RNA sequence: GGGAACGACUCGAGUAGAGUCGAAAACACAAGGGCACCGACAGGCGCAUCACAGAUAUCACCGAAUGACUUCGGAGUGAUCUGGCGCAGUUUCCCGGCUGAAUUCCAAAGGCCUCGGCCGGGCGACCUUUUCUCCCAUAUUCGUAUGGGAGAAAAGAAAAGAAACAACAACAACAAC
Reactivity to DMS in 0.01 (KOAc 150mM, MgCl2 10mM, bicine 150mM(pH8.5), 24C), signal-to-noise 5, nucleotides 027 to 126: c050a100c140a070a080g000g010g000c050a060c070c050g020a100c150a060g010g010c020g000c020a090u030c130a300c020a020g000a020u000a030u010c000a060c010c000g000a020a040u010g000a170c230u010u010c000g010g000a040g000u000g000a010u010c020u000g010g000c050g000c050a120g020u000u000u000c000c000c020g010g000c000u010g000a030a150u020u020c060c090a140a120a160g010g010c300c070u020c020g000g000c000c010g020g010g000c090g000a010c040
Reactivity to 2A3 in 0.01 (KOAc 150mM, MgCl2 10mM, bicine 150mM(pH8.5), 24C), signal-to-noise 3, nucleotides 027 to 126: c070a000c050a060a090g060g020g010c040a040c050c020g070a040c030a070g060g010c020g000c010a040u120c050a020c000a020g030a020u030a010u060c010a010c020c000g000a030a050u200g200a150c150u020u010c010g010g000a030g010u040g010a020u010c000u020g030g000c020g000c020a010g000u010u050u000c000c000c000g000g000c000u000g030a070a090u160u100c050c020a190a150a080g080g000c000c020u010c010g010g000c000c000g000g000g000c000g030a020c000